[RMDB]
RNA sequence: GGGAACGACUCGAGUAGAGUCGAAAAACCAGGCAGUUCGGAGGAAUAUUCAAUUCUCAGCGGAAGCCAGAAUUUGAAUCCUCUCAUCUUUUAGGAAUCAUUUACUAAGUUUGGAAAGAACUCAGGCCCUGCCAUUUAUUUUCGAAUAAAUGGCAGGAAAAGAAACAACAACAACAAC
Reactivity to DMS in 0.01 (KOAc 150mM, MgCl2 10mM, bicine 150mM(pH8.5), 24C), signal-to-noise 3, nucleotides 027 to 126: a140c010c020a140g010g030c140a030g010u000u010c060g000g000a050g000g000a250a080u040a170u010u000c030a020a030u000u000c000u010c300a170g040c020g000g080a130a150g030c020c300a010g000a010a010u000u010u000g030a050a040u010c010c000u000c000u000c020a040u000c030u000u040u000u010a050g000g000a110a140u000c140a130u030u010u020a050c020u000a020a010g010u000u000u000g020g020a070a100a160g000a020a020c010u010c040a100g000g000c160
Reactivity to 2A3 in 0.01 (KOAc 150mM, MgCl2 10mM, bicine 150mM(pH8.5), 24C), signal-to-noise 6, nucleotides 027 to 126: a000c010c000a030g080g050c080a020g000u010u030c020g040g010a010g020g030a080a110u120a070u170u000c000a000a010u010u000c020u010c060a020g010c020g080g140a080a010g000c000c010a010g010a000a010u130u060u130g000a000a010u010c000c000u000c010u000c010a040u020c010u040u190u020u070a020g030g040a070a080u140c050a160u150u140u130a070c010u010a030a040g060u050u060u040g060g060a100a100a050g000a030a020c000u010c050a060g110g000c020